An RNA of 207 nucleotides, treated with 2A3 and read out base by base. The data come from the RNA Mapping Database (RMDB), library M2RFPK. For 2A3, 490 sequencing reads were counted. Conditions: 150 mM KOAc, 10 mM MgCl2 and 150 mM bicine (pH 8.5), 24 C. For 2A3 the reverse transcriptase was SuperScript II with manganese.
[RMDB]
RNA sequence: GGGAACGACUCGAGUAGAGUCGAAAAGAGAUGGCGAGAGCGAUCGGUAGUAUAGCGAAAAUCAUAAAUGAGAAGAGCUCUAAACGCCUAAGUAGAGUUAAAAUAAUUAGACAGGCACUACUACAAACACGGCCUCGAACGUUCGCGUUCGAGGCAAGUUUCUGAAAAUCUUCGGAUUUUCAGAAACAAAAGAAACAACAACAACAAC
Reactivity to 2A3 in 0.01 (KOAc 150mM, MgCl2 10mM, bicine 150mM(pH8.5), 24C), signal-to-noise 1, nucleotides 027 to 156: g030a000g030a010u010g030g050c020g000a080g000a000g070c070g030a060u060c040g040g000u010a060g000u040a050u120a030g060c020g050a120a050a090a050u040c000a120u070a170a170a010u090g040a040g030a160a030g000a040g020c000u000c000u060a060a060a000c010g010c000c010u020a120a000g000u000a000g000a030g020u170u240a030a010a060a060u270a040a070u180u030a020g020a050c010a000g040g000c010a000c020u020a040c000u010a000c140a070a300a000c070a030c150g060g010c000c010u000c000g030a000a000c000g040u070u040c120g010c000g100u000u000c000g000a000g000g020c030a000a000